Background: Conditions: 150 mM KOAc, 10 mM MgCl2 and 150 mM bicine (pH 8.5), 24 C. Chemical mapping of a 207-nucleotide RNA with 2A3 and DMS. For DMS, 15,726 sequencing reads were counted. DMS adducts were read by reverse transcription with MarathonRT.
[RMDB]
RNA sequence: GGGAACGACUCGAGUAGAGUCGAAAACUACGAAUCACUGGUUCGCGCCUUCCGCUACUUCGGUGGUUGUGUGAAAACGGUGCUGGUUGAUAACCAGAAGGCUGCGGUGCUGAAGAAUAACAACGGGAAAGUCGUGUUCAACUCCGGAUUCCUGUUGACAACAAUAAACAUUCGUGUUUAUUGUUGUAAAAGAAACAACAACAACAAC
Reactivity to 2A3 in 0.01 (KOAc 150mM, MgCl2 10mM, bicine 150mM(pH8.5), 24C), signal-to-noise 9, nucleotides 027 to 156: c050u110a050c060g070a060a060u100c020a030c100u060g040g030u050u040c030g000c000g010c030c040u050u080c010c010g020c050u100a100c070u190u150c110g040g000u030g010g030u040u050g030u010g010u020g090a030a030a030a060c040g040g000u050g010c010u010g000g030u030u050g090a100u070a140a040c010c010a020g020a040a030g060g000c040u080g020c060g050g040u070g000c030u060g020a100a070g060a070a050u150a150a020c020a000a010c000g000g010g030a010a070a060g100u060c020g010u040g050u250u100c040a050a050c040u020c040c010g000g010a010u030u010c000c000u010g010u020u020g010
Reactivity to DMS in 0.01 (KOAc 150mM, MgCl2 10mM, bicine 150mM(pH8.5), 24C), signal-to-noise 5, nucleotides 027 to 156: c020u000a080c040g020a090a030u000c010a060c090u010g030g030u000u000c030g020c030g020c030c040u000u000c010c020g010c040u000a070c110u000u010c070g030g030u000g020g030u000u000g020u000g040u000g010a070a050a060a100c040g010g040u000g010c020u000g030g010u000u000g020a170u010a100a100c020c010a080g010a100a100g020g020c010u000g020c030g020g020u000g010c030u000g020a080a120g010a140a100u010a100a270c030a030a020c030g020g010g000a050a040a100g020u000c010g010u010g020u000u010c050a130a140c020u000c020c010g000g010a230u000u000c000c000u000g020u000u000g010